[RMDB]
RNA sequence: GGGAACGACUCGAGUAGAGUCGAAAAUUCUGCACCGUCAUGAGUCAAGUCACUCAUUACUCAAUUAUCCUCAGACUCUGGAAUGACGAUCACUGGCGUCAGCGGAUCGGCACCGCAAGUUCAUUGACACGUGGUAUGAGUUCGCUCAUACCACGUGAAAAGAAACAACAACAACAAC
Reactivity to 2A3 in 0.01 (KOAc 150mM, MgCl2 10mM, bicine 150mM(pH8.5), 24C), signal-to-noise 3, nucleotides 027 to 126: u060u030c010u040g050c030a030c070c000g050u020c010a010u060g030a010g060u030c100a150a020g030u140c000a060c010u010c000a030u020u110a050c030u040c060a030a140u130u040a120u150c010c010u050c060a030g030a080c010u000c040u090g030g050a100a080u080g010a020c000g030a020u030c040a050c090u040g070g010c020g080u110c030a010g000c020g030g000a040u020c000g040g000c040a010c000c010g000c010a040a010g030u080u090c070a050u110u120g010a030
Reactivity to DMS in 0.01 (KOAc 150mM, MgCl2 10mM, bicine 150mM(pH8.5), 24C), signal-to-noise 3, nucleotides 027 to 126: u010u000c030u000g010c090a080c100c060g010u010c040a050u000g010a030g000u000c050a120a120g000u020c080a080c050u010c010a060u010u000a040c080u000c100a060a090u010u010a090u010c030c020u000c070a080g010a040c040u000c040u010g050g000a070a080u000g000a060c020g010a060u000c040a090c080u000g010g000c100g020u010c070a080g040c030g010g010a060u010c060g020g010c060a060c020c040g020c090a090a050g020u010u000c080a050u000u010g010a270
This 177-nucleotide RNA was probed chemically with 2A3 and DMS. Source: RMDB library OK2TST, as collected in RNAgym.